[RMDB]
RNA sequence: GGGAACGACUCGAGUAGAGUCGAAAAAACAUAUGAUGUUAACUUUCAUUAUAGCGGUUCUAUACCUUAUCUUGAUUCUACAUUUUACCUCUCACACACUUUCAAUUCUUUAGCAAUUACUUUUGAUUCAGCAGUUCCUUGGCCUGGAAAUGACAGGAAGUACAGCGUUAUUCGUAACGCUGUACUUAAAAGAAACAACAACAACAAC
Reactivity to 2A3 in 0.01 (KOAc 150mM, MgCl2 10mM, bicine 150mM(pH8.5), 24C), signal-to-noise 4, nucleotides 027 to 156: a020a000c150a100u290a090u180g000a040u040g010u060u090a070a070c030u110u060u110c040a060u030u100a080u020a060g050c070g030g030u030u150c130u150a080u040a150c010c010u050u030a050u070c010u040u070g010a020u110u000c020u090a090c010a110u020u070u050u150a070c010c000u020c000u030c020a020c010a000c010a010c100u010u100u040c050a090a210u100u030c020u040u090u090a030g030c010a070a160u070u060a200c030u090u090u070u100g040a070u080u040c000a020g010c010a020g040u030u040c000c000u020u050g050g000c010c000u000g030g040a070a100a090u090g060a040c010a020g040g020
Reactivity to DMS in 0.01 (KOAc 150mM, MgCl2 10mM, bicine 150mM(pH8.5), 24C), signal-to-noise 1, nucleotides 027 to 156: a070a040c010a040u000a000u000g000a100u010g020u010u000a090a090c070u000u000u010c000a030u000u000a060u010a030g020c150g020g050u020u020c150u010a120u000a070c030c000u130u000a070u000c050u020u010g000a050u000u000c040u000a040c010a100u000u010u000u010a060c070c020u000c010u000c020a080c070a110c020a060c020u000u000u010c060a070a090u010u000c050u010u000u010a040g020c020a090a060u000u000a040c060u000u020u010u020g030a100u010u010c090a080g010c060a190g000u010u000c010c010u000u000g000g000c010c020u000g000g000a090a070a110u000g000a110c060a000g010g000